[RMDB]
RNA sequence: GGGAACGACUCGAGUAGAGUCGAAAAGAUAUGGAAUCGAACUACAGACUGCCACAUCGAUGAAAUCGGAAACGAUGGAGAUGUGAUGUCUGCGAUUCCUAAGUCAAAACCUCGGUUCGCCGAGGAACAAUAAACCCAAGUUCGCUUGGGUUUAUUGAAAAGAAACAACAACAACAAC
Reactivity to DMS in 0.01 (KOAc 150mM, MgCl2 10mM, bicine 150mM(pH8.5), 24C), signal-to-noise 4, nucleotides 027 to 126: g000a050u000a300u010g000g010a000a000u000c000g000a080a070c120u020a300c010a010g000a020c000u000g020c140c000a020c000a000u000c000g010a100u010g010a070a130a010u000c000g000g000a100a090a160c010g010a020u000g010g010a040g010a020u000g010u000g010a110u000g000u000c000u000g010c000g000a020u000u000c000c000u010a020a070g000u000c040a080a060a090a110c010c000u000c000g020g000u000u010c210g020c010c000g010a010g000g000a020a050
Reactivity to 2A3 in 0.01 (KOAc 150mM, MgCl2 10mM, bicine 150mM(pH8.5), 24C), signal-to-noise 5, nucleotides 027 to 126: g030a020u090a040u160g010g010a000a000u000c010g010a080a080c080u170a050c300a010g010a000c010u100g190c150c000a000c000a000u010c010g180a280u060g030a030a060a000u020c020g000g050a080a050a050c010g000a010u020g010g010a040g000a010u000g000u000g010a020u060g000u000c010u000g000c000g010a000u010u000c000c000u000a110a020g020u000c010a010a020a090a240c000c000u000c000g010g010u080u060c280g010c090c000g000a010g000g000a000a010